[RMDB]
Chemical mapping of a 170-nucleotide RNA with DMS and 2A3. The reactions ran in a buffer of 150 mM KOAc, 10 mM MgCl2 and 150 mM bicine (pH 8.5), at 24 C. The data come from the RNA Mapping Database (RMDB), library 15KLIB.
RNA sequence: GGGAACGACUCGAGUAGAGUCGAAAAGAAUUCCUAUUGUUGAUGACCCUGUGGUUGAUUGGCAUUAUUUUGAUGCACAGCCCUUGACCAGGAAGGUACAACAGCUUUUCUAUACAGAGGACAUGGCGCACUGCCACCUUCGGGUGGCAGAAAAGAAACAACAACAACAAC
Reactivity to DMS in 0.01 (KOAc 150mM, MgCl2 10mM, bicine 150mM(pH8.5), 24C), signal-to-noise 3, nucleotides 027 to 129: g010a130a300u080u000c040c000u000a050u010u020g070u010u020g000a130u020g010a130c040c130c000u040g090u040g010g000u010u010g030a100u000u000g010g020c030a020u010u030a060u060u060u070u060g070a090u020g090c070a040c040a000g070c050c000c050u030u000g000a050c180c090a100g040g020a130a020g000g000u070a120c070a020a090c110a120g030c070u030u000u000u040c000u020a140u020a070c180a000g050a090g000g000a080c050a070u040g000g060c080g000c250a050
Reactivity to 2A3 in 0.01 (KOAc 150mM, MgCl2 10mM, bicine 150mM(pH8.5), 24C), signal-to-noise 2, nucleotides 027 to 129: g070a030a090u110u030c050c030u060a090u000u100g040u030u030g000a170u020g130a140c060c000c000u000g060u030g050g000u090u000g080a090u050u100g010g000c040a000u000u000a160u000u300u030u300g000a020u040g000c000a000c000a070g010c060c000c000u060u130g000a000c000c000a000g030g020a000a000g120g000u020a020c020a010a000c000a100g000c000u040u000u110u040c000u020a000u040a070c070a080g000a070g000g000a010c050a040u010g000g000c040g040c020a030
Reactivities are given for positions 27 through 129.